[RMDB]
RNA sequence: GGGAACGACUCGAGUAGAGUCGAAAAGGAUGCGCGUAUUUGUGUGUGUGUUUAUCGCGCUAGAAAUAGUGUUCGAUAUUUUCCGACUUUUGUACGCGCAUCGAAGAAACACACACGAAAGUCGGAAGGGUAACCUAUUCUUCGGAAUAGGUUACCCAAAAGAAACAACAACAACAAC
Reactivity to 2A3 in 0.01 (KOAc 150mM, MgCl2 10mM, bicine 150mM(pH8.5), 24C), signal-to-noise 2, nucleotides 027 to 126: g220g000a000u000g000c000g000c000g000u010a020u010u300u180g170u070g000u000g000u000g020u010g000u040u000u010a010u010c000g020c010g000c010u000a000g010a000a030a010u000a010g000u000g050u080u180c000g000a000u010a060u090u080u020u000c000c000g000a000c000u000u000u020u280g020u000a000c000g010c000g000c000a000u000c000g000a010a000g000a000a010a000c010a000c000a000c000a000c060g140a020a020a000g010u000c000g000g010a000a030
Annotation:
This 177-nucleotide RNA was probed chemically with 2A3. As a SHAPE reagent, 2A3 marks flexible, mostly unpaired nucleotides at the ribose 2'-OH. The reactions ran in a buffer of 150 mM KOAc, 10 mM MgCl2 and 150 mM bicine (pH 8.5), at 24 C.